[RMDB]
RNA sequence: GGGAACGACUCGAGUAGAGUCGAAAACUUGCAAACUUCGGUUUGCAAGAAAGAACGCUCCGGCGAGCAGCAGCCAGAGAAGGCAACACAAUCGCCAUAAAAAAAUCUAUGAGUUCGCUCAUAGAAACAAAGGUAGUAUCUUCGGAUACUACCUUUGAAAAGAAACAACAACAACAAC
Reactivity to DMS in 0.01 (KOAc 150mM, MgCl2 10mM, bicine 150mM(pH8.5), 24C), signal-to-noise 2, nucleotides 027 to 126: c000u000u000g000c000a020a000a010c000u010u000c220g020g000u000u000u000g020c000a000a000g010a060a070a150g010a140a160c170g000c010u000c050c050g020g000c030g000a060g010c090a030g010c100a140g010c010c010a070g010a140g020a060a090g000g010c000a040a020c070a050c120a100a130u000c050g030c030c030a120u080a020a010a040a050a060a100a100u000c000u000a010u000g000a010g000u010u000c190g000c000u000c000a020u000a000g000a050a050a150
Reactivity to 2A3 in 0.01 (KOAc 150mM, MgCl2 10mM, bicine 150mM(pH8.5), 24C), signal-to-noise 1, nucleotides 027 to 126: c000u010u000g040c000a000a010a010c010u030u070c080g190g000u030u000u000g000c010a000a000g020a000a010a010g020a060a050c020g000c040u050c030c120g000g000c020g010a030g000c040a010g000c020a010g000c010c020a060g020a020g070a300a080g030g000c020a090a020c070a020c020a060a100u040c020g000c030c020a000u180a010a100a000a010a000a000a060u030c000u000a010u010g010a010g080u040u080c240g060c030u010c010a010u020a000g000a050a010a010
Notes:
An RNA of 177 nucleotides, treated with DMS and 2A3 and read out base by base. It was measured as part of the RMDB library M2PK50. 2A3 adducts were read by reverse transcription with SuperScript II with manganese. The reactions ran in a buffer of 150 mM KOAc, 10 mM MgCl2 and 150 mM bicine (pH 8.5), at 24 C.